An RNA of 177 nucleotides, treated with 2A3 and DMS and read out base by base.
2A3 adducts were read by reverse transcription with SuperScript II with manganese.
It was measured as part of the RMDB library TTRDEL.
RNA sequence: GGGAACGACUCGAGUAGAGUCGAAAAGAUAUGGAAGAAAGGGAGACUAGAGCUACCAUGUCGGAAACGACAUGAUGCUCAUCGUUGAUCUUUCUUCCUAAGUCAAAGAGUCACUUCGGUGACUCAAGAUAAAGUGAUCGUUCGCGAUCACUUUAUCAAAAGAAACAACAACAACAAC
Reactivity to 2A3 in 0.01 (KOAc 150mM, MgCl2 10mM, bicine 150mM(pH8.5), 24C), signal-to-noise 2, nucleotides 027 to 126: g020a020u090a060u170g010g000a000a020g010a010a020a010g010g000g000a110g010a030c030u080a080g010a020g030c000u010a040c040c020a020u000g000u000c010g020g000a080a070a050c000g000a000c000a000u010g000a000u050g000c000u000c000a060u020c020g000u010u000g010a000u000c000u010u000u000c010u010u000c000c000u000a010a000g000u010c010a030a020a110g010a000g000u000c000a000c030u080u130c300g120g000u010g010a000c000u010c010a000a000
Reactivity to DMS in 0.01 (KOAc 150mM, MgCl2 10mM, bicine 150mM(pH8.5), 24C), signal-to-noise 4, nucleotides 027 to 126: g000a060u000a300u010g000g000a010a020g000a010a010a000g010g000g010a300g000a020c020u010a280g000a010g000c000u000a050c110c000a000u000g000u000c010g010g000a150a070a150c010g000a000c000a000u000g010a030u000g000c000u000c000a050u000c250g010u000u000g000a300u010c010u000u000u000c010u000u000c000c000u010a020a040g000u000c050a130a080a140g000a010g000u000c000a000c000u000u010c160g040g010u000g000a000c000u000c000a010a050